Notes: Conditions: 150 mM KOAc, 10 mM MgCl2 and 150 mM bicine (pH 8.5), 24 C. Structure probing data (DMS and 2A3) for a 177-nucleotide construct. For 2A3, 1,379 sequencing reads were counted. High DMS reactivity at an A or C suggests that its Watson-Crick edge is free. Reactivities are given for positions 27 through 126.
RNA sequence: GGGAACGACUCGAGUAGAGUCGAAAAGGAUUACCGAUUGAAGAAGCAACGGGACUGCCAUUUUGUUCCGAGCAUCCGGGGUUCAUGCACGCCUGCGGCCAUGAUGUGCAUGCAUCAAUUGCCCUCGCGUAAGCGUCUCUUUCGAGAGACGCUUACGAAAAGAAACAACAACAACAAC
Reactivity to DMS in 0.01 (KOAc 150mM, MgCl2 10mM, bicine 150mM(pH8.5), 24C), signal-to-noise 2, nucleotides 027 to 126: g020g000a080u000u000a160c010c010g010a160u000u000g010a090a090g000a120a110g000c020a070a090c040g010g020g010a040c040u000g000c110c130a170u010u010u010u000g000u000u000c010c010g020a180g010c060a060u000c060c040g000g000g000g000u000u010c040a020u000g000c040a030c040g010c030c040u000g010c120g020g010c060c090a090u000g000a040u000g010u000g020c090a040u000g020c070a000u000c050a040a110u000u000g010c040c010c020u000c170g000
Reactivity to 2A3 in 0.01 (KOAc 150mM, MgCl2 10mM, bicine 150mM(pH8.5), 24C), signal-to-noise 2, nucleotides 027 to 126: g030g020a030u040u130a120c000c000g060a100u060u300g090a140a120g070a100a020g000c050a100a130c020g000g010g000a030c030u050g120c120c050a180u180u200u080u160g000u030u000c000c010g000a000g000c000a030u070c040c040g010g000g000g000u040u060c050a000u050g000c040a000c010g040c020c010u110g000c080g130g000c010c020a120u120g040a070u070g010u030g040c040a020u040g000c000a040u020c040a000a160u090u050g100c020c010c030u060c030g010